An RNA of 177 nucleotides, treated with DMS and 2A3 and read out base by base. Reactivities are given for positions 27 through 126. The reactions ran in a buffer of 150 mM KOAc, 10 mM MgCl2 and 150 mM bicine (pH 8.5), at 24 C. Reactivities are rounded to 0.1 and cut off at 0 and 3. The DMS profile rests on 6,307 reads.
RNA sequence: GGGAACGACUCGAGUAGAGUCGAAAAGUUGCCCGAGAAGAGAUCACACAGAUGACACACAAGGAGCGAUGUCUCAUCACUUGGUUUUCGACAAGUGACGAGUCGUUCCCAAAAUCGCUCCAAUGAAUGUAAGAAGUCAAUUCGUUGACUUCUUACAAAAAGAAACAACAACAACAAC
Reactivity to DMS in 0.01 (KOAc 150mM, MgCl2 10mM, bicine 150mM(pH8.5), 24C), signal-to-noise 5, nucleotides 027 to 126: g010u000u010g010c080c000c010g010a120g000a100a080g000a080g000a060u000c040a070c120a100c130a080g010a050u000g010a040c090a060c080a060c130a100a100g010g000a020g010c000g010a070u000g000u010c110u000c080a060u000c020a040c030u000u010g010g000u000u010u010u020c200g000a090c020a020a030g010u000g000a040c030g010a020g000u000c000g000u010u000c000c000c010a010a010a040a050u000c010g000c010u010c010c010a090a050u010g000a090a100
Reactivity to 2A3 in 0.01 (KOAc 150mM, MgCl2 10mM, bicine 150mM(pH8.5), 24C), signal-to-noise 1, nucleotides 027 to 126: g010u040u020g160c010c020c000g000a040g020a070a000g120a000g000a030u010c020a020c030a000c030a090g110a160u070g020a070c020a020c010a010c050a250a060g020g010a010g030c030g000a000u040g040u000c030u040c110a080u040c010a000c000u000u050g060g000u220u080u080u210c040g080a060c000a000a060g030u010g100a010c040g030a040g000u000c010g010u000u000c000c000c000a000a030a000a030u000c000g000c010u000c020c000a000a060u160g030a050a010